[RMDB]
RNA sequence: GGGAACGACUCGAGUAGAGUCGAAAAUGGUGUUAAGUGGAAUAAGUGGAAAAAUAUACAUAUAUGUACAGGGGGCUACAUAUAUGUAUAUGCCCCCUCGAUUCAGUAUAAGUAGGUAUAAGGUGGACAUGACGUAUGGUUUCGACCAUACGUCAUGAAAAGAAACAACAACAACAAC
Reactivity to 2A3 in 0.01 (KOAc 150mM, MgCl2 10mM, bicine 150mM(pH8.5), 24C), signal-to-noise 2, nucleotides 027 to 126: u110g090g010u030g030u160u120a190a040g060u080g030g050a080a080u130a220a020g020u130g040g070a100a070a040a050a000u020a000u010a020c000a000u010a000u020a000u050g030u020a040c100a100g080g000g000g000g000c010u020a010c000a000u080a000u010a000u030g020u000a000u000a000u030g020c030c010c000c000c000u000c000g030a030u040u030c020a000g040u070a010u010a190a030g070u050a020g020g040u070a090u020a090a080g000g000u040g030g020a040
Reactivity to DMS in 0.01 (KOAc 150mM, MgCl2 10mM, bicine 150mM(pH8.5), 24C), signal-to-noise 3, nucleotides 027 to 126: u010g000g010u000g010u000u000a020a100g000u010g020g010a070a050u020a040a070g000u010g010g000a010a090a040a090a040u000a020u000a000c010a020u000a010u010a010u010g010u000a050c130a110g000g010g000g000g010c120u000a010c000a030u010a020u010a020u000g010u000a020u010a030u020g000c050c020c000c000c000u000c030g010a060u000u000c060a080g010u000a030u020a020a090g000u030a040g010g010u030a060u000a050a040g000g000u000g000g000a170